[RMDB]
RNA sequence: GGGAACGACUCGAGUAGAGUCGAAAACCAGCGAGAGGCGUAGGCGAGAGGGCCGGGUUGCUCUGGAGUAGAGGCUUCUUGCUUCGAAACAUCAUCGAUCGUCCCUUCUUCUUUUACCUUCUCCUGGCUCUUCCGAUGAGACGCGACCGGUGGCAUCCGGACCUUCAAUGUUCGCAUUGAAGGUCCGAAAAGAAACAACAACAACAAC
Reactivity to 2A3 in 0.01 (KOAc 150mM, MgCl2 10mM, bicine 150mM(pH8.5), 24C), signal-to-noise 1, nucleotides 027 to 156: c000c000a020g020c150g020a010g010a000g020g000c200g080u030a020g010g030c030g010a000g000a010g000g010g020c000c000g020g020g000u030u000g020c000u000c010u010g010g000a010g020u020a020g000a000g000g000c020u200u020c110u270u300g040c030u010u000c030g030a010a000a000c010a040u300c000a020u040c000g210a160u120c000g040u040c010c030c000u100u230c000u040u100c000u010u130u040u010a010c010c000u020u000c010u000c000c010u020g000g030c010u020c040u100u020c010c020g070a140u120g000a020g010a040c040g010c050g070a090c010c010g080g040u040g010g000c000a020u060c040